[RMDB]
RNA sequence: GGGAACGACUCGAGUAGAGUCGAAAAUACCUUAGCUAGUAAUGUCUGGGCAUUGGCAGAAAUUUUCCUACUUCCCCCAUCGCAAUUUGGCAUAGAGGUUUUCAGUGAAUAUUCCAAUAGCACCAAGCUCCCUACAUCUGUUCGCAGAUGUAGGGAGAAAAGAAACAACAACAACAAC
Reactivity to DMS in 0.01 (KOAc 150mM, MgCl2 10mM, bicine 150mM(pH8.5), 24C), signal-to-noise 1, nucleotides 027 to 126: u020a120c040c020u000u000a120g000c080u000a050g000u000a110a090u000g000u010c080u020g020g010g010c080a040u000u000g010g020c090a050g000a040a090a050u000u000u000u010c020c020u000a120c100u000u000c030c010c000c070c060a040u000c080g030c020a040a070u010u000u000g010g020c050a070u020a050g020a080g020g020u000u010u010u000c120a050g030u000g010a100a070u010a080u000u010c030c040a030a040u000a090g020c040a080c070c110a080a120g000